An RNA of 177 nucleotides, treated with 2A3 and DMS and read out base by base. For 2A3 the reverse transcriptase was SuperScript II with manganese. Reactivities are rounded to 0.1 and cut off at 0 and 3.
RNA sequence: GGGAACGACUCGAGUAGAGUCGAAAAACUGGGGCUGGGUUUCCCCCGCUAAUGUCAACGGCAGGACCUUGGGAGGUGGAUCCUCUUAUAGCAAGAAAUUCAACUAAGGCAGAUAUUGAGACUAACCCUACGCUAUGAUUUUCGAAUCAUAGCGUAGAAAAGAAACAACAACAACAAC
Reactivity to 2A3 in 0.01 (KOAc 150mM, MgCl2 10mM, bicine 150mM(pH8.5), 24C), signal-to-noise 3, nucleotides 027 to 126: a000c030u030g000g020g030g000c030u060g040g050g060u030u050u070c010c000c020c010c020g020c060u070a080a130u130g050u060c030a080a040c060g020g000c020a020g000g070a050c010c020u100u080g030g000g010a030g000g000u090g070g050a040u080c030c010u010c030u030u100a160u090a050g030c030a070a010g020a080a100a000u090u050c030a020a020c050u060a040a000g030g030c020a000g020a060u080a060u090u100g020a050g020a020c020u010a040a050c000c000
Reactivity to DMS in 0.01 (KOAc 150mM, MgCl2 10mM, bicine 150mM(pH8.5), 24C), signal-to-noise 4, nucleotides 027 to 126: a100c080u000g000g010g000g020c050u010g010g010g010u000u000u000c030c020c020c040c060g020c060u010a060a070u000g010u000c080a060a080c120g000g020c070a080g010g010a080c080c050u000u000g010g000g020a060g020g020u010g010g000a090u010c050c020u000c050u000u000a060u010a040g020c090a070a050g010a050a070a090u010u000c070a050a070c080u020a070a080g010g000c070a040g000a080u000a060u000u010g010a090g010a080c190u010a070a130c090c070